[RMDB]
RNA sequence: GGGAACGACUCGAGUAGAGUCGAAAAGCAUCCUUUCGCUGAGGACCACUUCUAUGGAAUGGUCACCCAAGUUAUAACCUUCCUGCUCACACCAUCUCAACACGAGGGAUUCGCCGAUGACGAGCAAGGCAUUUAUGCACUUCGGUGCAUAAAUGCCAAAAGAAACAACAACAACAAC
Reactivity to 2A3 in 0.01 (KOAc 150mM, MgCl2 10mM, bicine 150mM(pH8.5), 24C), signal-to-noise 2, nucleotides 027 to 126: g020c010a110u070c010c000u040u160u160c100g020c080u000g060a060g020g090a060c000c020a030c120u050u000c040u120a160u250g050g050a060a000u050g030g020u060c020a080c030c000c020a060a000g090u110u170a260u000a130a060c000c040u060u010c000c020u010g010c000u000c020a050c000a020c010c000a070u020c050u080c030a090a080c070a010c160g030a060g010g050g060a140u120u070c030g000c070c040g050a130u130g010a030c080g000a010g100c020a010a020
Reactivity to DMS in 0.01 (KOAc 150mM, MgCl2 10mM, bicine 150mM(pH8.5), 24C), signal-to-noise 2, nucleotides 027 to 126: g000c070a160u000c030c010u010u000u010c110g040c060u000g000a070g010g000a040c000c030a050c220u000u010c030u000a070u020g060g020a030a090u000g030g000u000c020a050c010c030c000a060a030g020u010u050a110u000a080a240c100c070u000u000c030c000u000g050c030u000c050a050c050a150c060c010a110u000c000u000c030a050a150c220a110c140g000a030g000g010g030a110u000u000c090g010c060c030g000a080u030g000a060c090g030a080g060c130a130a020
Chemical mapping of a 177-nucleotide RNA with 2A3 and DMS.
For DMS the reverse transcriptase was MarathonRT.
The DMS profile rests on 746 reads.
The RNA was probed in 150 mM KOAc, 10 mM MgCl2 and 150 mM bicine (pH 8.5) at 24 C.